[RMDB]
RNA sequence: GGGAACGACUCGAGUAGAGUCGAAAAAAAUGAGCGAUAGAGUGCUUCGGUAGUAAAAAUAUCUUUCAGGAAGUAAACACAUCAGGAGCGAUAGCGGUGAAUUAUUCGUGGUUUUGUCGAUUCGGCAGAUCUUUUAUAACUUCGGUUAUAAAAGAUCAAAAGAAACAACAACAACAAC
Reactivity to 2A3 in 0.01 (KOAc 150mM, MgCl2 10mM, bicine 150mM(pH8.5), 24C), signal-to-noise 2, nucleotides 027 to 126: a000a000a020u160g000a020g000c040g040a040u050a130g090a030g070u060g000c020u050u040c030g030g000u020a030g050u080a050a050a050a050a140u120a080u070c000u040u130u070c010a010g030g110a030a000g020u050a040a180a060c040a000c010a080u110c030a020g000g040a050g000c000g040a030u040a010g050c060g000g030u040g020a100a100u090u030a040u060u100c090g020u090g050g050u040u030u030u180g000u010c020g010a090u060u000c000g020g020c020a030
Reactivity to DMS in 0.01 (KOAc 150mM, MgCl2 10mM, bicine 150mM(pH8.5), 24C), signal-to-noise 3, nucleotides 027 to 126: a070a060a050u010g000a080g020c040g020a070u000a080g010a160g020u000g000c040u000u000c070g020g010u000a040g000u010a020a090a110a100a080u000a030u000c040u000u000u000c110a070g000g000a060a080g010u010a060a070a080c110a060c080a040u010c100a050g000g020a090g020c050g000a030u000a040g030c070g000g030u010g000a060a060u000u010a060u000u000c050g020u000g010g020u000u000u010u000g010u000c020g000a160u010u010c030g000g000c230a140
Structure probing data (2A3 and DMS) for a 177-nucleotide construct. It was measured as part of the RMDB library RFMREP. Conditions: 150 mM KOAc, 10 mM MgCl2 and 150 mM bicine (pH 8.5), 24 C. For DMS the reverse transcriptase was MarathonRT.